The record gives the reactivity of an RNA of 177 nucleotides to 2A3 and DMS.
RNA sequence: GGGAACGACUCGAGUAGAGUCGAAAAACACGGCUCCGCCACCGAAGGCCGCGGAAAUCGUGGCGCGACGGGUUUCCGGGAUGCGAUCGGAAAGCACCGCAGUGAUAGGGGCCACCAUCAUAUUGAGGCUACGGUAUCAGUUCGCUGAUACCGUAGCAAAAGAAACAACAACAACAAC
Reactivity to 2A3 in 0.01 (KOAc 150mM, MgCl2 10mM, bicine 150mM(pH8.5), 24C), signal-to-noise 2, nucleotides 027 to 126: a010c020a000c020g000g020c000u000c020c040g020c030c040a050c000c040g060a050a050g180g000c000c000g010c030g040g040a090a080a120u300c010g000u000g000g000c020g040c000g150a050c040g030g030g020u000u030u000c020c000g000g020g020a100u270g110c070g080a120u110c000g010g000a050a040a040g150c040a090c150c010g020c030a030g020u010g060a040u110a170g000g030g020g150c000c000a010c000c000a070u190c040a050u100a120u180u140g050a030g160
Reactivity to DMS in 0.01 (KOAc 150mM, MgCl2 10mM, bicine 150mM(pH8.5), 24C), signal-to-noise 1, nucleotides 027 to 126: a110c140a100c170g000g010c020u000c030c010g000c110c040a080c000c060g010a140a090g030g000c010c010g020c010g000g000a050a050a080u020c000g030u000g000g010c000g030c040g000a110c040g010g020g010u000u000u010c000c000g000g000g000a100u000g000c180g000a040u000c030g000g000a010a010a040g020c090a050c010c000g000c060a090g010u010g020a040u000a140g020g010g000g000c030c020a120c130c020a070u010c120a090u000a190u010u020g020a170g000
Source information: For DMS the reverse transcriptase was MarathonRT. The reactions ran in a buffer of 150 mM KOAc, 10 mM MgCl2 and 150 mM bicine (pH 8.5), at 24 C. The data come from the RNA Mapping Database (RMDB), library OK2TST. The 2A3 profile rests on 1,824 reads. The DMS profile rests on 946 reads.